[RMDB]
RNA sequence: GGGAACGACUCGAGUAGAGUCGAAAAACGAGGUACGCCUCGAAAAUAUGACCGGUGUCAUAGCCUCUAGCACACAGAGGUCGCGUGGGUUCAACUCCCCCCCUUUUCCGAGGGUAUCGGAUACCAAAAAACACAAUUUGGUUCGCCAAAUUGUGAACUAUCCCUUGGGCUUCGGCCCAAGGGAUAGAAAAGAAACAACAACAACAAC
Reactivity to 2A3 in 0.01 (KOAc 150mM, MgCl2 10mM, bicine 150mM(pH8.5), 24C), signal-to-noise 1, nucleotides 027 to 156: a000c000g000a020g000g000u000a010c150g060c030c000u000c000g010a110a000a000a050u070a070u110g020a000c030c050g200g020u190g010u160c040a070u080a000g010c020c030u030c010u020a110g150c150a020c010a000c010a130g000a000g020g010u080c070g010c000g010u160g090g040g000u080u100c060a080a060c060u040c010c000c000c000c000c000c000u080u170u050u000c000c000g010a020g000g020g000u080a080u000c000g000g010a010u060a050c000c020a000a000a000a130a150a000c020a010c000a000a000u000u010u000g030g030u000u040c170g010c030c000a000a000a000u000u020g000u000g000a010a000
Structure probing data (2A3) for a 207-nucleotide construct. The RNA was probed in 150 mM KOAc, 10 mM MgCl2 and 150 mM bicine (pH 8.5) at 24 C. The data come from the RNA Mapping Database (RMDB), library M2RFPK.